RNA sequence: GGGAACGACUCGAGUAGAGUCGAAAAACUCUUCAGUCUGGUCUUAGAAAAAUUGCACAACCUUCAGGUGUUGUUGAACCAUGCAUUGUCCGUGUAGCUUAUGGUAGCACAGUGCUUAAUGGUUUAUGGUUAGGCGAUGAAGUGAUUUGUCCUAGACCCACUAGGGGUGGUUCGCCACCCCUAGUGGAAAAGAAACAACAACAACAAC
Reactivity to 2A3 in 0.01 (KOAc 150mM, MgCl2 10mM, bicine 150mM(pH8.5), 24C), signal-to-noise 2, nucleotides 027 to 156: a030c040u100c000u000u060c040a090g010u010c010u040g100g000u020c010u090u180a070g150a000a120a110a080a080u270u250g050c030a040c000a040a040c010c030u200u230c060a110g020g080u050g000u050u030g010u000u040g000a000a010c000c010a010u090g010c030a000u000u040g060u030c100c100g080u020g120u140a040g030c040u130u050a090u260g160g000u030a020g000c060a040c020a000g020u010g000c010u070u160a050a000u060g000g020u000u000u060a060u050g000g000u010u070a010g060g000c000g070a140u100g000a050a020g000u010g160a070u000u040u120g000u010c000c010u000a020g090a040c000
Conditions: 150 mM KOAc, 10 mM MgCl2 and 150 mM bicine (pH 8.5), 24 C. Chemical mapping of a 207-nucleotide RNA with 2A3. The data come from the RNA Mapping Database (RMDB), library OK3TST.